[RMDB]
RNA sequence: GGGAACGACUCGAGUAGAGUCGAAAAAAAGAUAUGGACCAGCGGGAGCUGAACUUGGCUAUGAAGACUUCUCGGAAACGAGAAGUUGGAGCCAAGAUUCAGCGAAGAACGCUGGUCCUAAGUCAAAUCUACUAGGUAUGUUCGCAUACCUAGUAGAAAAAGAAACAACAACAACAAC
Reactivity to DMS in 0.01 (KOAc 150mM, MgCl2 10mM, bicine 150mM(pH8.5), 24C), signal-to-noise 4, nucleotides 027 to 126: a060a070a090g000a030u010a290u000g010g000a020c000c000a010g010c000g010g000g010a110g020c000u000g010a000a020c000u000u000g010g000c000u000a220u020g020a140a200g010a010c000u000u000c010u000c000g010g000a060a050a110c000g000a010g010a000a010g010u000u000g000g010a010g010c000c000a000a000g000a150u000u000c000a000g020c000g010a070a110g010a120a190c010g000c000u000g000g010u000c000c000u000a000a060g010u000c030a080a120a140
Reactivity to 2A3 in 0.01 (KOAc 150mM, MgCl2 10mM, bicine 150mM(pH8.5), 24C), signal-to-noise 2, nucleotides 027 to 126: a000a000a010g020a020u060a030u070g000g010a000c000c000a010g010c010g010g040g030a150g020c010u000g000a010a000c010u010u000g010g030c010u060a240u300g020a010a010g010a010c000u000u010c010u000c000g010g020a040a040a030c000g000a010g000a000a000g000u000u000g000g000a000g000c010c000a010a010g000a010u000u000c000a000g000c000g000a000a000g010a020a000c010g010c000u020g000g010u000c000c000u000a000a000g000u010c000a000a000a120